[RMDB]
RNA sequence: GGGAACGACUCGAGUAGAGUCGAAAAAGCGCUUAAUGUGUACAUGGGUAUUCCCCCAUAUCUGUGUACUAUAGCUGAGAGGACUUGCUUGAUAGGGGGAGCAGUGCAAGUUUGGGUGGUGCGCGAAGUGUAUAUUUAUUUUCGAAUAAAUAUACACAAAAGAAACAACAACAACAAC
Reactivity to 2A3 in 0.01 (KOAc 150mM, MgCl2 10mM, bicine 150mM(pH8.5), 24C), signal-to-noise 6, nucleotides 027 to 126: a000g050c040g000c020u070u080a090a040u170g040u020g000u050a000c000a000u020g000g000g000u000a020u010u050c000c000c000c000c000a000u000a000u000c000u000g000u000g000u000a000c010u020a040u100a010g010c020u020g040a010g010a020g050g030a030c000u020u030g020c000u030u050g050a030u160a120g020g010g000g010g000a010g010c010a000g020u040g010c010a020a030g000u020u050u060g020g000g000u070g000g010u030g010c030g000c010g020a120a020
Reactivity to DMS in 0.01 (KOAc 150mM, MgCl2 10mM, bicine 150mM(pH8.5), 24C), signal-to-noise 7, nucleotides 027 to 126: a140g010c030g010c030u010u030a070a090u020g020u010g010u000a000c000a010u000g000g000g010u000a010u000u020c020c010c000c010c050a300u000a000u000c000u000g020u000g010u000a010c010u020a080u030a080g000c030u010g000a190g000a090g010g000a030c020u010u000g010c010u010u000g010a100u020a100g010g000g000g000g000a050g000c000a040g000u010g010c020a020a030g000u000u010u000g000g000g020u010g010g010u010g000c030g010c020g000a060a100

Source: RMDB library OK1LIB, as collected in RNAgym. Chemical mapping of a 177-nucleotide RNA with 2A3 and DMS. The 2A3 profile rests on 12,581 reads.